An RNA of 177 nucleotides, treated with DMS and 2A3 and read out base by base.
For DMS, 1,652 sequencing reads were counted.
The reactions ran in a buffer of 150 mM KOAc, 10 mM MgCl2 and 150 mM bicine (pH 8.5), at 24 C.

[RMDB]
RNA sequence: GGGAACGACUCGAGUAGAGUCGAAAACCUUUUUGACACUUUUCUUGUUGCCUGUGGCUAUUUGUUUGACUUAUGCAAACAUAGUCUACGAGCCCACUACUCCCAUUUCGUCAGCGCUGAUUGCAGUACAAGCUUAAUUCUUCGGAAUUAAGCUUGUAAAAGAAACAACAACAACAAC
Reactivity to DMS in 0.01 (KOAc 150mM, MgCl2 10mM, bicine 150mM(pH8.5), 24C), signal-to-noise 2, nucleotides 027 to 126: c010c010u020u000u020u000u000g010a080c030a100c060u000u000u000u000c050u010u010g000u010u010g020c040c030u020g030u010g000g000c000u000a050u020u000u020g020u000u000u010g000a110c090u000u030a150u020g000c020a010a020a030c010a040u000a000g010u000c010u000a040c070g010a100g000c030c070c030a040c080u000a100c080u000c010c020c020a150u010u010u010c090g010u010c050a010g010c060g010c030u000g000a070u000u000g020c040a100g010u000
Reactivity to 2A3 in 0.01 (KOAc 150mM, MgCl2 10mM, bicine 150mM(pH8.5), 24C), signal-to-noise 1, nucleotides 027 to 126: c040c000u000u040u040u050u010g070a050c030a040c050u080u010u080u020c050u050u110g080u050u040g010c000c010u040g000u030g020g000c000u000a060u070u070u180g040u000u030u010g070a100c020u130u190a110u270g120c040a030a040a000c020a030u010a010g000u020c000u020a010c040g010a020g060c030c020c000a050c030u170a030c000u010c060c000c000a010u020u060u050c030g030u000c020a000g060c040g040c060u070g040a090u100u040g000c000a010g000u010

Source: RMDB library 15KREP, as collected in RNAgym.